[RMDB]
RNA sequence: GGGAACGACUCGAGUAGAGUCGAAAACGCAGUAUAGUGCCACUUGUGUGAGAAUACUUUUAGUACAAGCGAGUACACGCAGUAUACUGCCACUUGUGUGAGAAUACUUUUAGUACAAGCGAGUACACCUCCAUGCUACCUUCGGGUAGCAUGGAGGAAAAGAAACAACAACAACAAC
Reactivity to 2A3 in 0.01 (KOAc 150mM, MgCl2 10mM, bicine 150mM(pH8.5), 24C), signal-to-noise 1, nucleotides 027 to 126: c000g000c010a000g000u110a050u070a000g280u130g000c040c000a000c000u000u000g000u000g000u030g120a250g140a050a000u000a020c000u070u290u300u300a010g000u000a020c010a120a100g000c000g080a010g000u030a000c010a000c090g000c000a060g000u000a000u000a000c000u000g000c000c000a060c000u000u050g000u000g000u000g030a020g140a010a010u070a160c000u020u000u120u200a010g010u010a030c150a190a030g120c040g040a040g000u000a000c000a040